[RMDB]
RNA sequence: GGGAACGACUCGAGUAGAGUCGAAAACUGUGGCUCCACAUCACAUUGGUUGGGCUAUAGGCGCCUUUAAUUCAUGGUCUUUACCUUUGAUAUCACCUCCAAGUGUUGAUGCCGAGGACGAAGUAGAAUGCGUAUAAUGAUUCGUCAUUAUACGCAUAAAAGAAACAACAACAACAAC
Reactivity to DMS in 0.01 (KOAc 150mM, MgCl2 10mM, bicine 150mM(pH8.5), 24C), signal-to-noise 9, nucleotides 027 to 126: c040u000g010u000g010g010c020u010c010c060a070c080a060u000c080a110c160a130u000u000g010g010u000u000g010g010g010c040u000a070u010a070g010g010c190g000c030c020u000u000u010a050a070u010u010c070a070u000g000g010u000c080u000u000u000a080c030c020u000u000u010g010a060u000a050u010c060a070c050c020u000c100c100a050a080g010u010g010u000u000g010a050u000g010c050c130g000a050g000g010a070c090g010a040a060g010u000a090g010a100
Reactivity to 2A3 in 0.01 (KOAc 150mM, MgCl2 10mM, bicine 150mM(pH8.5), 24C), signal-to-noise 7, nucleotides 027 to 126: c010u030g020u050g080g000c030u020c020c040a020c000a040u100c020a020c030a180u060u210g060g020u030u050g020g010g000c020u030a030u050a130g090g030c060g090c030c000u130u150u120a120a090u130u110c070a060u160g080g000u030c030u030u100u060a050c010c000u050u030u120g060a060u040a010u080c030a050c030c000u070c050c030a110a040g070u060g030u210u080g030a020u050g000c010c010g010a020g030g010a090c050g020a050a020g010u070a040g060a140

This 177-nucleotide RNA was probed chemically with DMS and 2A3. The 2A3 profile rests on 9,635 reads. Values cover nucleotides 27 to 126. The DMS profile rests on 20,506 reads. Conditions: 150 mM KOAc, 10 mM MgCl2 and 150 mM bicine (pH 8.5), 24 C. It was measured as part of the RMDB library OK2TST.